[RMDB]
RNA sequence: GGGAACGACUCGAGUAGAGUCGAAAAACACAAAAACUGAAAACGGAAGGCAAUCCUUCCACGACGAUACUUACUUUCCUUUGAUCGUCGUUACUACUGGCAUAGCCACAAAGGAGAACAAACAUGAGCGCGGACACUGACUUCGGUCAGUGUCCAAGAUCGUGGCCAAGUUCGCUUGGCCACGAUCAAAAGAAACAACAACAACAAC
Reactivity to 2A3 in 0.01 (KOAc 150mM, MgCl2 10mM, bicine 150mM(pH8.5), 24C), signal-to-noise 2, nucleotides 027 to 156: a020c090a000c050a020a050a040a060a020c130u220g130a110a070a100a110c110g020g000a030a010g000g000c120a040a130u230c020c000u030u000c000c000a010c010g000a000c000g000a000u100a220c050u100u080a010c020u090u170u070c010c020u000u000u140g010a010u000c000g000u000c000g030u070u100a010c060u040a070c000u030g010g010c030a210u110a160g040c050c000a030c060a050a030a000g020g010a050g020a040a010c000a130a130a020c060a080u240g070a070g100c150g000c080g070g000a000c000a010c000u000g000a000c000u020u050c150g050g000u000c000a000g000u000g000u000c000c000a000a000